[RMDB]
The data come from the RNA Mapping Database (RMDB), library 15KLIB. This 170-nucleotide RNA was probed chemically with 2A3 and DMS. The reactions ran in a buffer of 150 mM KOAc, 10 mM MgCl2 and 150 mM bicine (pH 8.5), at 24 C.

RNA sequence: GGGAACGACUCGAGUAGAGUCGAAAACCUCGGAUGUCCAGGCCGUCCCCUCUUCUAGAGAAGGGAGACUCCGGAACUUCUUCCAUGAUUGGGACGAAGCCGCCACCGGGCGCUCCCCUCGGAGGUCAAGCCCUAUCCUUCGGGAUAGGGAAAAGAAACAACAACAACAAC
Reactivity to 2A3 in 0.01 (KOAc 150mM, MgCl2 10mM, bicine 150mM(pH8.5), 24C), signal-to-noise 9, nucleotides 027 to 129: c010c000u010c010g030g010a080u110g080u080c050c030a060g030g040c020c020g100u040c010c010c000c000u030c000u060u020c030u100a070g010a010g010a110a180g020g020g010a010g010a080c010u000c010c010g010g020a020a010c000u020u010c000u030u020c000c010a070u180g040a300u300u240g090g000g010a020c070g020a030a000g030c070c050g080c070c020a120c030c010g010g000g000c110g010c020u010c000c000c000c000u000c010g020g010a020g000g020u050c040a050a020g030
Reactivity to DMS in 0.01 (KOAc 150mM, MgCl2 10mM, bicine 150mM(pH8.5), 24C), signal-to-noise 9, nucleotides 027 to 129: c070c020u030c030g020g020a050u020g030u050c030c030a010g000g030c040c000g000u010c030c020c020c050u000c030u020u020c050u040a080g010a080g010a110a060g050g030g030a060g030a070c040u020c040c040g030g040a150a130c010u000u000c020u020u030c010c010a070u040g020a170u110u080g050g030g000a040c110g030a020a020g060c160c060g020c080c100a110c040c010g000g000g000c160g010c010u000c010c010c010c000u000c000g000g020a070g000g010u000c120a090a080g000